An RNA of 207 nucleotides, treated with 2A3 and read out base by base.
Values cover nucleotides 27 to 156.
Values are in units of 0.01, from 0 to 300, in steps of 10.
It was measured as part of the RMDB library M2RFPK.
[RMDB]
RNA sequence: GGGAACGACUCGAGUAGAGUCGAAAACUCAAUGUAGGGAAUAACAUUGAAUUGAUACAAAUACCUUUUUCGAUGUAGGGAAAAACACCGAAUUGAUACAAAUACCUUUCUCAAUGUAGGGAAUAACAAAACAGGCAUCGCUUCGGCGAUGCCUGAACGCUUGGAUAUACUUCGGUAUAUCCAAGCGAAAAGAAACAACAACAACAAC
Reactivity to 2A3 in 0.01 (KOAc 150mM, MgCl2 10mM, bicine 150mM(pH8.5), 24C), signal-to-noise 2, nucleotides 027 to 156: c010u020c020a000a000u040g030u070a120g000g120g120a130a110u110a050a000c010a000u000u010g010a040a060u050u090g090a070u120a210c070a040a190a070u090a100c010c020u050u020u000u000u030c040g010a000u010g020u020a020g000g050g030a020a190a020a000a000c010a000c010c000g030a010a010u020u070g020a030u060a110c070a060a080a020u090a070c000c000u000u080u020c010u030c020a050a130u160g030u090a060g050g000g000a030a090u070a060a060c100a040a040a010a020c000a010g000g050c000a000u030c030g100c060u100u130c240g000g000c020g000a000u000g010c000c000u000g000a000a000